[RMDB]
RNA sequence: GGGAACGACUCGAGUAGAGUCGAAAAACAAGCGCUCAUCUUUAGUGUAUAUUUGGAUGAGAUUAGAGAAGUUUAUCUACCAUGUUGCUACCACUAAAUCAAGCCCUAACAUAUUUUCACCAUCACGCCAAGUUCUCUUAUACCUCUUCCUAGUUGCGGAAGGGAUCUUUUUCGAAAGAUCCCUUCCAAAAGAAACAACAACAACAAC
Reactivity to 2A3 in 0.01 (KOAc 150mM, MgCl2 10mM, bicine 150mM(pH8.5), 24C), signal-to-noise 1, nucleotides 027 to 156: a000c080a080a020g150c040g000c060u020c000a010u040c070u050u240u150a170g020u130g200u120a130u060a210u270u060u150g000g000a020u010g000a010g030a010u020u050a040g000a000g010a140a020g020u030u110u120a100u040c010u010a060c090c040a040u170g020u010u050g000c000u020a110c020c000a010c080u060a000a000a090u020c040a030a040g090c000c000c000u030a090a020c040a040u080a060u120u040u100u090c060a030c000c010a000u080c020a000c040g010c010c010a060a000g010u070u000c020u000c000u000u010a040u050a080c020c000u040c000u150u110c010c020u240a010g020u090u110g030c050